[RMDB]
RNA sequence: GGGAACGACUCGAGUAGAGUCGAAAAGAAAUACGAAAAAUGUUGUGGAAAUCGCGUGAAAUAAUCAGAGGAAUCGUUUGAAAUCAUCGUAGUAAUCGCGCGAAAAUCACGUGAAAUAAUCAGAGGAUGGGAGUACGAUAUUCGUAUCGUACUCCCAAAAAGAAACAACAACAACAAC
Reactivity to DMS in 0.01 (KOAc 150mM, MgCl2 10mM, bicine 150mM(pH8.5), 24C), signal-to-noise 2, nucleotides 027 to 126: g000a130a050a220u120a070c100g000a040a120a070a060a060u040g050u000u000g070u000g010g000a140a030a170u000c030g000c010g070u000g020a000a040a050u070a110a120u000c040a200g040a050g000g000a100a110u000c090g030u000u000u010g000a070a080a100u000c030a140u000c040g000u000a100g020u000a030a080u000c000g000c000g000c020g020a000a010a090a120u010c000a000c160g000u000g000a040a080a040u050a100a140u000c060a050g040a140g000g000a110

This 177-nucleotide RNA was probed chemically with DMS. The reactions ran in a buffer of 150 mM KOAc, 10 mM MgCl2 and 150 mM bicine (pH 8.5), at 24 C. The DMS profile rests on 1,875 reads. Source: RMDB library RFM100, as collected in RNAgym.